[RMDB]
RNA sequence: GGGAACGACUCGAGUAGAGUCGAAAAAGAGUUCGCUUCGGCGAACUCUACAACGGGAAAACGGCCUGCCGGAAAGAUAAGGCGGAUUCCGUCCAAGCGCCGAGAGUGGUGCGUUCGCGCACCACAAUCUUUGUUUUUCGUUCGCGAAAAACAAAGAAAAAGAAACAACAACAACAAC
Reactivity to DMS in 0.01 (KOAc 150mM, MgCl2 10mM, bicine 150mM(pH8.5), 24C), signal-to-noise 1, nucleotides 027 to 126: a020g030a030g000u000u000c000g010c000u000u050c210g030g000c000g000a020a060c000u000c000u000a020c080a120a090c030g000g000g000a110a050a060a280c020g000g000c180c000u000g090c080c030g020g000a030a040a210g010a080u000a020a060g000g030c010g000g030a230u000u000c020c010g000u010c020c120a100a070g020c080g020c020c010g030a190g000a200g030u000g000g000u000g000c000g030u000u010c210g040c000g030c000a000c000c000a000c000a020a050

Structure probing data (DMS) for a 177-nucleotide construct. The RNA was probed in 150 mM KOAc, 10 mM MgCl2 and 150 mM bicine (pH 8.5) at 24 C.